[RMDB]
RNA sequence: GGGAACGACUCGAGUAGAGUCGAAAACAACUAAAAUAAUUCUGUCUGGUCUCAUCCUCAAAGUUGCCUUUACAAGAUCCGACAAGCCAACGCUGCCUACUCCUUCAACGUUUGCUUCUCUUGUAGCCCCAUAUCGGUGAUUCGUCACCGAUAUGGGAAAAGAAACAACAACAACAAC
Reactivity to 2A3 in 0.01 (KOAc 150mM, MgCl2 10mM, bicine 150mM(pH8.5), 24C), signal-to-noise 2, nucleotides 027 to 126: c000a000a020c020u250a050a050a020a170u270a080a140u090u060c030u080g050u000c020u020g010g140u030c040u000c040a040u040c020c030u050c030a000a110a050g060u100u080g000c020c000u040u110u070a100c090a030a010g020a110u020c020c010g030a030c030a090a000g000c000c010a030a050c040g000c040u010g030c000c000u030a050c020u000c000c000u050u040c010a030a050c070g000u000u070u080g030c020u020u050c010u010c020u020u050g110u140a150g050c000
Reactivity to DMS in 0.01 (KOAc 150mM, MgCl2 10mM, bicine 150mM(pH8.5), 24C), signal-to-noise 1, nucleotides 027 to 126: c080a040a110c200u020a070a060a080a120u000a100a070u000u000c040u000g030u020c030u020g000g010u000c020u010c070a030u000c020c000u000c030a030a120a050g010u020u000g000c050c030u000u020u010a100c090a130a100g010a090u000c040c020g000a030c060a050a090g010c050c010a010a100c060g000c010u010g000c040c040u030a070c070u010c010c020u010u010c040a050a040c100g000u000u000u020g000c030u000u010c010u000c040u000u030g010u010a070g010c090
The record gives the reactivity of an RNA of 177 nucleotides to 2A3 and DMS.
For 2A3 the reverse transcriptase was SuperScript II with manganese.
High DMS reactivity at an A or C suggests that its Watson-Crick edge is free.